This 177-nucleotide RNA was probed chemically with DMS and 2A3.
It was measured as part of the RMDB library TTRINS.
DMS adducts were read by reverse transcription with MarathonRT.
The reactions ran in a buffer of 150 mM KOAc, 10 mM MgCl2 and 150 mM bicine (pH 8.5), at 24 C.
For 2A3 the reverse transcriptase was SuperScript II with manganese.
[RMDB]
RNA sequence: GGGAACGACUCGAGUAGAGUCGAAAAGAUAUGGAUCAUCGAGCAGCGAAGAACUACUUUUCGUAUGAGUCUAUCGGAAACGAUAGAGCUCAUACGAAAAGUAGGGAGCUGCGAUGAUCCUAAGUCACAUUUUAUAUGCCUUCGGGCAUAUAAAAUGAAAAGAAACAACAACAACAAC
Reactivity to DMS in 0.01 (KOAc 150mM, MgCl2 10mM, bicine 150mM(pH8.5), 24C), signal-to-noise 3, nucleotides 027 to 126: g020a030u000a300u000g000g010a010u000c000a000u010c020g000a280g030c010a010g020c010g010a110a160g010a130a290c010u000a000c000u000u000u000u010c000g010u000a000u010g010a010g000u000c000u000a000u010c000g010g000a170a120a260c010g010a020u000a000g000a070g020c000u000c000a000u000a000c000g000a000a000a000a020g010u000a000g010g000g010a080g020c000u000g020c000g010a000u000g010a000u000c000c000u010a010a080g010u000c020a260
Reactivity to 2A3 in 0.01 (KOAc 150mM, MgCl2 10mM, bicine 150mM(pH8.5), 24C), signal-to-noise 2, nucleotides 027 to 126: g050a020u090a040u220g000g010a020u020c010a000u040c080g250a100g170c000a000g040c000g230a300a030g030a110a050c000u000a010c000u000u030u010u000c000g000u030a000u010g020a000g010u000c000u000a010u010c020g020g050a180a050a030c010g000a000u000a000g000a020g030c010u010c010a010u010a010c000g010a010a000a000a000g000u000a000g000g000g000a000g040c000u010g010c000g010a000u000g000a000u000c000c000u010a140a020g040u020c010a000